[RMDB]
RNA sequence: GGGAACGACUCGAGUAGAGUCGAAAAUACAGCGACUUGGGGCAUCGGCUGCGGGCCCCAUGAGGCACUGUGGUGUCAGAUCGCCCCGCAGUGCGCACAACUGGCGACUGAUAUAAAUAGAAGUGCAGAUCCUAAAUAGGUUCGCCUAUUUAGGAUCAAAAGAAACAACAACAACAAC
Reactivity to 2A3 in 0.01 (KOAc 150mM, MgCl2 10mM, bicine 150mM(pH8.5), 24C), signal-to-noise 6, nucleotides 027 to 126: u140a000c020a020g020c020g090a080c080u070u080g000g000g000g010c000a020u040c050g070g000c010u020g010c030g020g020g000c020c010c020c020a030u040g000a040g020g020c030a020c170u030g020u060g100g040u020g060u050c030a070g050a240u030c030g000c000c000c000c000g010c000a000g010u030g140c050g040c030a030c020a050a120c060u070g040g010c010g040a060c010u000g030a020u010a000u040a120a170a020u170a030g090a140a000g010u020g000c010a010
Reactivity to DMS in 0.01 (KOAc 150mM, MgCl2 10mM, bicine 150mM(pH8.5), 24C), signal-to-noise 6, nucleotides 027 to 126: u010a080c050a040g010c040g010a140c160u000u010g010g010g020g010c020a060u000c070g020g010c020u000g010c010g010g010g010c010c000c020c100a010u010g000a120g000g010c010a050c010u000g020u010g010g010u000g010u000c010a040g010a100u000c090g020c020c010c030c010g010c020a000g000u000g020c120g010c100a060c110a120a110c130u010g010g030c010g010a070c010u000g000a060u000a060u000a070a080a110u010a090g010a100a090g010u000g020c030a200

An RNA of 177 nucleotides, treated with 2A3 and DMS and read out base by base. For DMS the reverse transcriptase was MarathonRT. The 2A3 profile rests on 9,962 reads. The reactions ran in a buffer of 150 mM KOAc, 10 mM MgCl2 and 150 mM bicine (pH 8.5), at 24 C.